[RMDB]
RNA sequence: GGGAACGACUCGAGUAGAGUCGAAAAGAUAUGGAGCCAUUGGCUAGCUCAACAGCACCUUUCGGAAACGAAAGGUGACAUGAGCGGCCUGGCUCCUAAGUCAAACCCUACAGUUCGCUGUAGGGAACAACCCACCUACGUUCGCGUAGGUGGGUUGAAAAGAAACAACAACAACAAC
Reactivity to DMS in 0.01 (KOAc 150mM, MgCl2 10mM, bicine 150mM(pH8.5), 24C), signal-to-noise 2, nucleotides 027 to 126: g000a050u000a300u010g010g020a000g020c010c020a040u010u020g020g000c000u000a100g070c020u030c010a040a090c300a240g000c000a000c000c000u000u000u010c010g000g000a150a140a240c000g020a010a000a010g010g010u010g000a010c080a100u000g000a000g000c010g000g000c000c010u020g000g000c000u000c010c000u010a010a060g030u000c020a090a030a230c000c040c000u000a010c020a000g020u020u010c250g000c010u000g010u000a010g010g010g000a000a020
Reactivity to 2A3 in 0.01 (KOAc 150mM, MgCl2 10mM, bicine 150mM(pH8.5), 24C), signal-to-noise 1, nucleotides 027 to 126: g020a000u070a020u190g000g030a000g000c030c020a080u200u300g030g060c040u100a300g030c010u010c000a050a130c080a140g100c000a000c000c010u000u000u000c050g040g080a060a060a070c000g020a000a020a000g000g000u000g020a000c000a030u070g000a030g000c000g010g000c000c000u010g000g000c020u000c000c010u000a020a010g020u000c020a000a000a160c000c010c000u000a000c000a000g090u040u280c240g060c150u000g010u010a010g000g000g010a000a010
Description
The record gives the reactivity of an RNA of 177 nucleotides to DMS and 2A3. For 2A3 the reverse transcriptase was SuperScript II with manganese. Reactivities are given for positions 27 through 126. DMS adducts were read by reverse transcription with MarathonRT. The RNA was probed in 150 mM KOAc, 10 mM MgCl2 and 150 mM bicine (pH 8.5) at 24 C. For DMS, 1,170 sequencing reads were counted.